[RMDB]
RNA sequence: GGGAACGACUCGAGUAGAGUCGAAAACGCUGGGAAAGGUGUCGCAGGACAGGGAGAACUAUUCCUCCUGAAGCGCGCACGGGAGGAAUAGUUCGAGGAUCUGUUAUUGGCGACUCCCUUUCCUGUGCUGAAGCGCGCACGGCAACCGAAAGGUGCGGACUUAACGGUACUUCGGUACCGUUAAGUCAAAAGAAACAACAACAACAAC
Reactivity to 2A3 in 0.01 (KOAc 150mM, MgCl2 10mM, bicine 150mM(pH8.5), 24C), signal-to-noise 1, nucleotides 027 to 156: c040g040c040u130g030g000g020a000a000a000g010g000u030g000u000c000g000c010a020g120g000a010c000a000g010g000g000a000g000a000a000c010u000a000u000u000c000c000u000c010c010u030g020a180a060g010c000g000c020g000c010a040c050g030g040g000a000g010g000a010a000u000a000g000u010u000c000g010a020g010g010a000u000c010u000g030u020u050a250u230u300g240g030c000g000a000c000u040c010c000c000u000u000u000c000c000u000g060u050g000c070u130g040a070a000g020c030g000c000g000c030a010c020g050g000c050a100a170c030c010g000a090a050a000g000g020u030g020c040g070